[RMDB]
RNA sequence: GGGAACGACUCGAGUAGAGUCGAAAAGAUAUGGACGGAUAUCGCUUUGAUCGUACCUCCUUCGGAAACGAAGGAGGGUACGGGAGCGGCAUCCGUCCUAAGUCAAAGCUAACGUUCGCGUUAGCAACUGCUCCAUUUUGUUCGCAAAAUGGAGCAGAAAAGAAACAACAACAACAAC
Reactivity to DMS in 0.01 (KOAc 150mM, MgCl2 10mM, bicine 150mM(pH8.5), 24C), signal-to-noise 1, nucleotides 027 to 126: g000a040u010a300u000g010g010a000c020g000g020a010u010a020u000c020g000c000u000u030u000g000a120u000c000g010u000a040c000c000u020c000c000u000u010c010g000g000a090a130a300c000g030a000a070g010g030a060g000g010g020u010a000c000g000g010g010a000g000c010g060g000c060a020u000c000c010g000u000c000c000u000a000a060g010u020c040a060a130a220g000c020u000a010a040c000g000u000u000c300g010c020g010u010u010a000g020c000a060a070
Chemical mapping of a 177-nucleotide RNA with DMS.
The RNA was probed in 150 mM KOAc, 10 mM MgCl2 and 150 mM bicine (pH 8.5) at 24 C.
The DMS profile rests on 1,080 reads.